[RMDB]
An RNA of 207 nucleotides, treated with 2A3 and DMS and read out base by base. Conditions: 150 mM KOAc, 10 mM MgCl2 and 150 mM bicine (pH 8.5), 24 C. For DMS, 4,692 sequencing reads were counted.
RNA sequence: GGGAACGACUCGAGUAGAGUCGAAAAAGCGUAGCAGUACGCCGCUACGCAAGGCGCAUUUGAACUGUAUUGUACGCCUUGCAUAAAGCAAAAGUACUAAAAAAACGUGCCGUUACGACGGCACGAAAAAACAUCCAUUGGUUCGCCAAUGGAUGAACACUAACUUCUGGUUCGCCAGAAGUUAGUGAAAAGAAACAACAACAACAAC
Reactivity to 2A3 in 0.01 (KOAc 150mM, MgCl2 10mM, bicine 150mM(pH8.5), 24C), signal-to-noise 7, nucleotides 027 to 156: a000g020c030g010u030a010g020c060a020g040u020a010c020g010c020c040g000c000u040a020c090g000c000a000a000g010g000c010g010c050a100u090u120u270g150a200a110c120u130g070u300a130u180u100g050u070a040c020g000c000c000u000u000g000c000a030u110a120a130a010g010c020a020a030a080a020g090u060a040c070u200a010a050a030a020a020a000a040c000g000u000g000c010c000g000u010u030a080c280g010a000c000g070g000c000a000c000g000a000a000a000a000a000a000c000a000u000c000c000a000u000u000g010g010u020u050c120g030c090c000a000a000u000g000g000a000u000g000a000a000
Reactivity to DMS in 0.01 (KOAc 150mM, MgCl2 10mM, bicine 150mM(pH8.5), 24C), signal-to-noise 2, nucleotides 027 to 156: a090g010c010g010u010a030g020c150a090g010u000a060c040g000c050c000g030c000u000a070c040g000c010a010a000g040g000c000g040c000a090u000u030u020g050a040a270c100u000g030u050a290u000u000g010u000a040c000g000c000c000u000u000g000c030a120u000a030a090a120g010c060a090a110a100a160g000u000a080c060u020a000a000a050a120a050a030a150c010g060u010g030c000c000g030u000u010a160c230g040a110c020g000g060c000a010c010g000a010a000a040a130a090a050c070a010u000c000c010a030u000u000g000g030u000u010c300g060c000c000a020a050u000g000g010a010u010g000a020a110